[RMDB]
An RNA of 177 nucleotides, treated with DMS and 2A3 and read out base by base. The 2A3 profile rests on 637 reads.

RNA sequence: GGGAACGACUCGAGUAGAGUCGAAAACCUCGAGCUCUGAGUUUUCCAUCAAGCGGAGCCAGACUGAAAGCUAGGUGCAUUUCCCUGGAGAUAUAGGGAACAGAGGGAAGAGGGCGAGAGGGACCAAAAGAAACUGCCUAUUCGUAGGCAGUUUCUUAAAAGAAACAACAACAACAAC
Reactivity to DMS in 0.01 (KOAc 150mM, MgCl2 10mM, bicine 150mM(pH8.5), 24C), signal-to-noise 2, nucleotides 027 to 126: c000c000u000c010g000a300g000c060u000c000u020g000a040g000u060u000u010u000c020c000a130u020c130a250a190g030c030g000g000a160g110c080c100a010g010a190c150u090g000a020a070a080g000c110u000a050g060g000u040g040c120a100u000u020u000c000c030c020u080g000g000a170g070a300u110a090u000a000g000g000g080a030a000c300a060g020a110g000g000g050a050a030g000a000g000g000g000c000g010a110g000a030g020g000g010a160c120c010a080a070
Reactivity to 2A3 in 0.01 (KOAc 150mM, MgCl2 10mM, bicine 150mM(pH8.5), 24C), signal-to-noise 2, nucleotides 027 to 126: c000c000u000c000g070a070g000c010u070c040u040g080a060g140u020u010u060u130c100c000a090u030c070a060a040g100c050g000g080a040g010c010c000a050g010a090c030u230g100a100a000a000g050c000u100a000g020g000u100g110c070a140u010u010u000c000c000c000u020g170g070a230g060a110u250a040u140a080g060g000g000a060a040c050a080g100a040g000g060g060a030a020g000a010g000g010g000c020g000a010g040a010g000g000g000a000c010c010a030a160
Description
The RNA was probed in 150 mM KOAc, 10 mM MgCl2 and 150 mM bicine (pH 8.5) at 24 C. 2A3 is a SHAPE reagent: it acylates the 2'-hydroxyl of flexible nucleotides of all four kinds. Reactivities are given for positions 27 through 126.